[RMDB]
RNA sequence: GGGAACGACUCGAGUAGAGUCGAAAAGACAGCACAGACAGAUUGACCUAUUGGGGUGUUUCGCGAGUGUGAGAGGGAAGCGCCGCGGCCUGUAUUUCUAGACCUGCCCUUCGCCUGGUUCGUGGCGGUACAGAACGUGUUUCGACACGUUCUGUACAAAAGAAACAACAACAACAAC
Reactivity to DMS in 0.01 (KOAc 150mM, MgCl2 10mM, bicine 150mM(pH8.5), 24C), signal-to-noise 4, nucleotides 027 to 126: g010a080c100a070g020c050a030c050a070g000a090c080a070g000a080u020u040g010a080c030c030u010a100u030u020g030g000g010g020u000g000u000u010u010c050g000c070g000a070g020u010g000u040g010a080g000a110g000g010g000a050a070g000c070g020c030c050g030c030g000g000c040c030u020g020u030a060u010u010u020c050u000a070g020a090c030c020u000g010c010c020c060u020u010c060g020c030c020u010g000g010u020u010c060g010u010g000g000c030g010
Reactivity to 2A3 in 0.01 (KOAc 150mM, MgCl2 10mM, bicine 150mM(pH8.5), 24C), signal-to-noise 7, nucleotides 027 to 126: g040a020c040a010g040c030a020c030a050g110a030c010a000g070a070u070u100g060a110c000c000u050a110u110u130g040g010g010g000u040g040u020u080u060c040g010c010g030a100g040u070g010u050g030a070g020a030g020g050g020a060a010g040c020g000c020c000g030c010g010g030c000c000u070g040u090a090u010u090u020c020u020a040g040a100c010c000u010g020c020c000c000u040u040c010g030c000c010u050g040g000u030u060c070g020u050g010g010c050g010
The record gives the reactivity of an RNA of 177 nucleotides to DMS and 2A3. High 2A3 reactivity points to a flexible backbone, as in loops and unpaired stretches. The reactions ran in a buffer of 150 mM KOAc, 10 mM MgCl2 and 150 mM bicine (pH 8.5), at 24 C.